[RMDB]
RNA sequence: GGGAACGACUCGAGUAGAGUCGAAAAACUCAGAGUACAUACUUCUUUAUGUACCCAUAUGAACAUACAAUGCUAUGGAAUGUAAAGAAGUAUGUAUUUUUGGUAAAGGCGAGACUUCGGUCUCGCCCCUUGUAGAUUAGUUCGCUAAUCUACAAGGAAAAGAAACAACAACAACAAC
Reactivity to DMS in 0.01 (KOAc 150mM, MgCl2 10mM, bicine 150mM(pH8.5), 24C), signal-to-noise 6, nucleotides 027 to 126: a100c030u000c060a060g000a010g000u000a010c000a010u000a000c010u000u000c000u000u000u010a000u000g010u000a120c240c000c000a010u000a010u010g010a130a110c140a120u010a090c300a110a120u010g020c060u000a010u000g000g010a210a040u000g000u000a000a010a010g000a020a010g000u000a000u000g000u000a000u000u000u000u000u000g010g010u000a050a070a140g020g010c000g010a020g000a010c000u000u010c210g040g010u000c000u000c000g020c000c010
Reactivity to 2A3 in 0.01 (KOAc 150mM, MgCl2 10mM, bicine 150mM(pH8.5), 24C), signal-to-noise 9, nucleotides 027 to 126: a010c040u040c020a000g000a000g020u000a010c000a000u000a000c000u010u000c000u010u010u000a010u030g020u090a150c030c010c000a010u030a050u190g080a110a020c020a030u300a090c070a150a300u150g020c010u010a000u010g000g020a030a020u080g010u020a000a000a010g000a000a010g000u000a000u000g000u000a000u000u020u000u030u030g010g000u100a120a070a050g000g000c010g010a000g000a000c000u040u130c300g070g000u000c000u000c000g000c000c000

Annotation:
Chemical mapping of a 177-nucleotide RNA with DMS and 2A3. For DMS, 9,439 sequencing reads were counted. The 2A3 profile rests on 22,402 reads. For 2A3 the reverse transcriptase was SuperScript II with manganese.